[RMDB]
RNA sequence: GGGAACGACUCGAGUAGAGUCGAAAAGUUAUGGAAAACGUCUUAGCUACCACUACAACUACAAUGCUGGACGGUGAUGGUUCGACUUACUCGAAACCAUCACGUAGUGGUAGUCGUUCCCAUUCAACGGUAAUUAGAUCUUCGGAUCUAAUUACCGAAAAGAAACAACAACAACAAC
Reactivity to 2A3 in 0.01 (KOAc 150mM, MgCl2 10mM, bicine 150mM(pH8.5), 24C), signal-to-noise 7, nucleotides 027 to 126: g040u060u060a080u250g110g070a090a070a030a030c020g020u020c040u110u160a050g010c010u030a030c010c040a010c030u060a020c030a140a010c020u160a040c100a180a230u220g040c080u090g090g020a030c070g050g000u010g010a010u020g000g050u010u000c000g010a030c050u120u180a060c020u060c020g030a100a040a020c010c000a000u010c010a000c040g020u040a020g000u000g000g010u000a000g010u000c000g000u000u010c000c020c000a020u090u090c060a070a050
Reactivity to DMS in 0.01 (KOAc 150mM, MgCl2 10mM, bicine 150mM(pH8.5), 24C), signal-to-noise 4, nucleotides 027 to 126: g010u020u020a100u000g010g010a070a070a070a080c030g000u000c020u010u020a090g010c000u000a020c030c010a020c020u000a020c050a100a090c100u000a070c200a090a090u000g020c070u000g000g000a040c090g020g030u000g010a030u000g000g000u000u000c010g000a040c180u000u000a120c190u000c000g000a020a040a050c010c000a000u010c020a040c030g020u000a010g010u000g020g000u000a050g020u000c020g000u000u000c000c000c000a120u010u000c130a080a140
This 177-nucleotide RNA was probed chemically with 2A3 and DMS. Values cover nucleotides 27 to 126. The DMS profile rests on 3,859 reads. 2A3 is a SHAPE reagent: it acylates the 2'-hydroxyl of flexible nucleotides of all four kinds. It was measured as part of the RMDB library M2PK90. For DMS the reverse transcriptase was MarathonRT.